[RMDB]
RNA sequence: GGGAACGACUCGAGUAGAGUCGAAAAGCUUCACUCAUAUUAGCUCGUAAACAUGGCACUUGUUGUACUACAAGGGACAGAUUUUAUCGCUUGGCAAAUGAGUGUGCUCAGGUGCUAAGCGAAUAUGCGGACGAGUAUAGUUCGCUAUACUCGUCCGAAAAGAAACAACAACAACAAC
Reactivity to 2A3 in 0.01 (KOAc 150mM, MgCl2 10mM, bicine 150mM(pH8.5), 24C), signal-to-noise 1, nucleotides 027 to 126: g000c010u120u080c040a070c040u080c030a030u030a130u180u130a040g020c000u000c080g160u110a070a030a000c040a090u020g040g000c020a000c060u010u010g000u050u010g060u140a060c060u000a020c010a010a000g080g000g020a000c010a010g090a030u110u000u020u110a080u050c010g010c010u000u020g040g000c000a000a040a040u010g000a000g030u150g120u120g010c010u000c000a010g000g000u020g010c010u020a000a000g000c000g000a010a010u130a090u070g090
Reactivity to DMS in 0.01 (KOAc 150mM, MgCl2 10mM, bicine 150mM(pH8.5), 24C), signal-to-noise 2, nucleotides 027 to 126: g010c030u000u000c120a160c080u000c030a120u030a060u000u000a050g070c110u000c110g010u010a090a020a090c200a130u030g000g000c020a080c030u000u000g000u030u000g000u000a040c180u000a030c020a000a020g000g000g030a080c010a050g010a110u000u000u010u000a150u030c000g000c000u000u010g010g020c020a000a040a060u000g000a010g030u000g080u030g030c020u000c010a020g000g010u000g020c000u000a040a020g010c030g000a060a000u000a060u000g030